Notes:
Structure probing data (DMS and 2A3) for a 207-nucleotide construct. Values cover nucleotides 27 to 156. The RNA was probed in 150 mM KOAc, 10 mM MgCl2 and 150 mM bicine (pH 8.5) at 24 C.
[RMDB]
RNA sequence: GGGAACGACUCGAGUAGAGUCGAAAAACACCAAAACUGAAAACGGAAGGCAAUCCUUCCACGACGAUACUAACUUUCCUUUGAUCGUCGUUACUACUGGCAUAGCCACAAAGGAGAACAAACAUGAGCGCGGACACUGACUUCGGUCAGUGUCCAACACUAGGAUCGGGUUCGCCCGAUCCUAGUGAAAAGAAACAACAACAACAAC
Reactivity to DMS in 0.01 (KOAc 150mM, MgCl2 10mM, bicine 150mM(pH8.5), 24C), signal-to-noise 1, nucleotides 027 to 156: a010c150a200c040c010a020a050a070a250c080u000g020a120a030a100a080c050g010g010a050a010g050g070c100a230a190u000c000c000u000u000c000c000a120c110g000a020c000g000a050u000a090c120u000a050a090c090u000u000u000c070c060u000u000u020g000a010u000c010g020u010c020g000u000u000a080c030u000a030c070u000g050g030c000a190u000a260g000c000c010a010c080a100a140a060g000g020a090g010a080a050c080a150a100a200c070a060u000g010a120g020c070g010c120g090g080a010c000a020c000u000g000a020c000u000u010c300g080g020u000c000a000g060u000g020u020c000c000a000a010
Reactivity to 2A3 in 0.01 (KOAc 150mM, MgCl2 10mM, bicine 150mM(pH8.5), 24C), signal-to-noise 4, nucleotides 027 to 156: a000c110a100c040c030a060a080a060a040c120u200g120a070a040a040a090c060g010g010a010a020g000g000c150a050a200u210c000c000u000u020c010c000a010c000g000a000c000g000a000u120a200c020u120a120a070c020u100u170u080c020c000u120u040u030g030a020u010c000g010u000c000g010u020u030a020c050u020a060c010u020g010g000c040a220u100a140g040c010c000a030c020a030a100a010g010g020a000g040a060a020c080a120a120a030c040a120u280g080a040g060c160g020c070g020g020a000c000a000c000u020g020a030c010u050u070c190g020g000u000c000a000g000u000g000u020c000c000a000a000